Chemical mapping of a 207-nucleotide RNA with DMS and 2A3.
[RMDB]
RNA sequence: GGGAACGACUCGAGUAGAGUCGAAAAGCUAUUGUUGGAAUCACCGUACCUAUUUAGGUUUACGCUCCAAGAUCGGUGGAUAGCAGCCCUAUCAAUAUCUAGGAGAACUGUGCUAUGUAUAGAAGAUUAAAUCGACGCAUCUUCGGAUGCGUCGAAACCAGCAGUAAUUGUUCGCAAUUACUGCUGGAAAAGAAACAACAACAACAAC
Reactivity to DMS in 0.01 (KOAc 150mM, MgCl2 10mM, bicine 150mM(pH8.5), 24C), signal-to-noise 2, nucleotides 027 to 156: g020c040u000a010u000u010g000u000u000g000g000a190a070u010c000a100c060c010g030u010a050c010c030u000a210u000u000u000a050g000g010u000u000u000a110c020g010c070u000c070c040a060a110g000a030u000c060g020g010u000g050g020a050u000a010g010c040a110g020c070c070c020u000a070u020c050a080a090u000a050u000c120u000a120g000g040a120g000a040a090c030u000g000u000g030c020u000a060u000g010u000a150u010a110g010a070a200g000a110u000u030a050a080a180u000c010g020a020c010g040c010a010u000c000u010u010c300g040g000a010u000g020c000g060u000c000g010a000a040a090
Reactivity to 2A3 in 0.01 (KOAc 150mM, MgCl2 10mM, bicine 150mM(pH8.5), 24C), signal-to-noise 3, nucleotides 027 to 156: g030c010u020a010u050u100g160u170u250g070g120a150a080u220c020a000c010c000g020u030a030c020c020u120a220u300u230u290a030g010g000u010u060u030a030c040g000c040u000c020c010a030a010g010a060u020c000g000g020u020g000g030a000u010a010g000c040a010g020c000c000c020u070a100u180c050a040a080u030a010u110c020u010a010g000g000a040g040a040a070c070u100g000u080g150c050u120a080u190g030u030a060u110a170g070a170a010g020a070u130u150a110a090a100u050c000g000a000c000g020c010a000u000c000u010u030c080g060g000a000u000g000c000g000u000c010g010a010a000a000
For 2A3, 1,135 sequencing reads were counted. For DMS, 2,508 sequencing reads were counted. The reactions ran in a buffer of 150 mM KOAc, 10 mM MgCl2 and 150 mM bicine (pH 8.5), at 24 C.